Structure probing data (2A3 and DMS) for a 207-nucleotide construct. DMS adducts were read by reverse transcription with MarathonRT. 2A3 adducts were read by reverse transcription with SuperScript II with manganese. For DMS, 4,534 sequencing reads were counted. The 2A3 profile rests on 1,847 reads.
RNA sequence: GGGAACGACUCGAGUAGAGUCGAAAAGCAUGUGCAUCUGAUUGGCUGGGUCAAUAAUCUAGCUGCCUGUAACUCCAGUUACUCUAGUUUCUAGUUUGGGAAAGCAAGUAAGUGUUUGGCCUUUCCAGCCUCUCUUUUGGGAAGUGGAGUCUGCCUCAUAGUAAGGCAGGUUCGCCUGCCUUACUAUAAAAGAAACAACAACAACAAC
Reactivity to 2A3 in 0.01 (KOAc 150mM, MgCl2 10mM, bicine 150mM(pH8.5), 24C), signal-to-noise 3, nucleotides 027 to 156: g020c040a050u080g010u100g090c010a070u040c060u080g040a080u040u030g010g000c030u010g010g000g030u040c040a050a080u160a110a060u070c030u060a030g030c030u020g020c030c030u080g040u110a030a040c020u050c080c040a040g020u030u050a030c020u040c040u100a070g050u050u040u000c010u030a050g040u040u080u010g010g000g020a070a060a030g000c040a080a000g040u120a150a010g010u050g070u080u050u060g020g000c010c000u020u090u070c030c010a020g030c040c000u010c010u010c000u030u150u060u090g040g010g000a080a030g040u080g030g000a010g020u000c030u060g070c020c000u070c030
Reactivity to DMS in 0.01 (KOAc 150mM, MgCl2 10mM, bicine 150mM(pH8.5), 24C), signal-to-noise 2, nucleotides 027 to 156: g000c020a060u000g040u000g020c020a110u010c040u000g010a120u010u020g020g000c020u000g010g040g020u010c010a120a080u000a080a070u010c020u000a060g020c020u000g010c060c030u010g010u000a060a100c030u000c030c060a080g020u010u000a050c040u000c090u000a090g000u000u010u000c040u000a060g010u000u000u000g000g020g010a070a100a150g010c020a060a050g030u000a050a080g030u000g000u000u000u010g020g030c030c040u000u000u000c030c010a080g040c040c010u000c030u000c030u000u000u000u010g040g010g000a060a050g010u000g030g010a130g030u000c030u010g010c020c000u000c140